[RMDB]
RNA sequence: GGGAACGACUCGAGUAGAGUCGAAAAUUGCCGUCCUAAUGGUGUGAGGUGGUAUGAUAAGUACGCUAUAUGCCUCACAACAACUAUGCAGUAGACAGUAUUAUAUUCCUCAUUUUACAGAUCAGGACAUUAAGGCUUGGAGAUGUCAAAUAAAUCACACACAAUAGUGGUUCGCCACUAUUGUGUGAAAAGAAACAACAACAACAAC
Reactivity to DMS in 0.01 (KOAc 150mM, MgCl2 10mM, bicine 150mM(pH8.5), 24C), signal-to-noise 2, nucleotides 027 to 156: u010u000g010c010c010g010u010c010c000u000a040a140u030g040g000u010g090u000g010a020g020g020u030g030g040u010a020u000g000a140u000a090a200g020u000a060c110g030c140u000a080u000a080u000g010c000c010u000c020a070c000a070a040c020a050a120c060u000a080u010g030c070a110g010u000a140g020a090c020a090g010u000a090u000u000a100u000a160u000u000c020c010u010c090a120u000u000u000u010a150c010a110g020a070u000c090a030g020g000a040c040a100u000u020a080a140g020g000c020u010u020g000g030a150g000a060u010g000u000c050a040a040a150u010a040a060a110u020c060a210
Reactivity to 2A3 in 0.01 (KOAc 150mM, MgCl2 10mM, bicine 150mM(pH8.5), 24C), signal-to-noise 6, nucleotides 027 to 156: u090u050g050c020c000g060u020c020c000u110a130a080u100g040g020u010g020u010g040a000g000g030u100g090g000u080a030u050g070a090u080a210a060g090u080a030c100g000c120u050a030u030a030u300g010c020c000u020c010a010c000a010a010c000a010a010c010u110a040u150g070c070a010g030u070a020g020a060c050a010g070u040a070u220u050a100u050a060u090u040c000c010u080c050a060u040u070u060u090a030c030a030g060a060u050c010a020g050g030a000c000a000u080u120a090a030g000g010c040u030u060g070g020a090g020a030u050g050u100c020a000a060a000u210a030a090a020u220c080a060